Source: RMDB library 15KLIB, as collected in RNAgym. Chemical mapping of a 170-nucleotide RNA with 2A3 and DMS.
[RMDB]
RNA sequence: GGGAACGACUCGAGUAGAGUCGAAAACCCUGUCUCCUCGGUUCUUCUUCGAUCCGGACCGGCUCAUCUCGGCAAGAGGCGGCAGUCCUCAGUACUCUUACUCUUUCCUAUAAAGAGGAGACUGCUGGCAUCGACAGAUUCGUCUGUCGAAAAAGAAACAACAACAACAAC
Reactivity to 2A3 in 0.01 (KOAc 150mM, MgCl2 10mM, bicine 150mM(pH8.5), 24C), signal-to-noise 9, nucleotides 027 to 129: c000c000c000u010g010u000c010u000c000c000u020c010g030g020u060u030c030u110u010c020u070u100c070g080a080u010c010c030g020g030a060c020c010g020g000c020u020c020a130u020c030u020c020g030g010c060a080a040g020a020g050g000c000g010g000c010a010g050u050c000c010u030c010a020g030u060a130c020u010c010u060u080a250c000u030c000u040u110u040c040c050u150a130u180a230a070a000g020a000g010g000a010g000a010c000u010g000c020u010g040g030c010a100
Reactivity to DMS in 0.01 (KOAc 150mM, MgCl2 10mM, bicine 150mM(pH8.5), 24C), signal-to-noise 9, nucleotides 027 to 129: c030c000c020u010g030u030c030u010c000c000u000c020g000g000u030u030c040u020u020c050u040u030c090g040a100u030c060c000g010g020a090c090c040g000g000c030u000c070a080u020c040u020c060g010g040c130a090a070g040a030g000g000c070g000g020c040a040g000u000c030c030u010c030a080g040u010a090c050u000c030u020u010a190c010u000c030u000u020u020c120c080u050a150u060a050a050a030g030a010g000g000a010g000a050c060u020g000c020u000g010g040c120a180
Reactivities are rounded to 0.1 and cut off at 0 and 3. The 2A3 profile rests on 122,485 reads. DMS adducts were read by reverse transcription with MarathonRT. For 2A3 the reverse transcriptase was SuperScript II with manganese.